[RMDB]
RNA sequence: GGGAACGACUCGAGUAGAGUCGAAAAGUGCAGAGUGAAAUUCAUAGGUGCCUCGCCAAUGUGGCGUAAGGACCCGGUACUCCGCGCAGUCGCGCUGUAAACGUUCUGUGUUGGCGUUCAGGCCUCACGUCGCACUAUGAUUCGUCAUAGUGCGACGAAAAGAAACAACAACAACAAC
Reactivity to DMS in 0.01 (KOAc 150mM, MgCl2 10mM, bicine 150mM(pH8.5), 24C), signal-to-noise 2, nucleotides 027 to 126: g020u020g010c000a080g000a090g010u000g000a090a060a020u030u060c100a080u020a070g050g000u020g020c010c040u060c000g010c000c020a150a120u030g010u040g030g000c040g040u010a090a020g020g000a100c000c010c040g020g000u020a020c020u000c030c060g030c050g000c000a120g020u010c040g030c070g000c010u000g000u040a050a060a080c090g010u010u000c020u060g060u020g000u000u050g010g000c070g000u010u060c180a120g010g000c000c000u020c050a270
Reactivity to 2A3 in 0.01 (KOAc 150mM, MgCl2 10mM, bicine 150mM(pH8.5), 24C), signal-to-noise 2, nucleotides 027 to 126: g140u140g010c030a010g060a050g000u200g110a040a150a170u290u110c100a140u200a300g000g010u090g160c000c000u000c000g000c000c010a030a100u250g080u160g030g000c010g030u000a090a120g000g000a010c000c000c030g000g000u000a010c000u050c040c040g020c010g070c000a000g000u060c000g000c000g000c030u150g060u200a110a080a000c010g000u040u110c000u100g050u000g050u150u110g000g020c010g000u020u090c000a010g080g020c000c000u000c000a040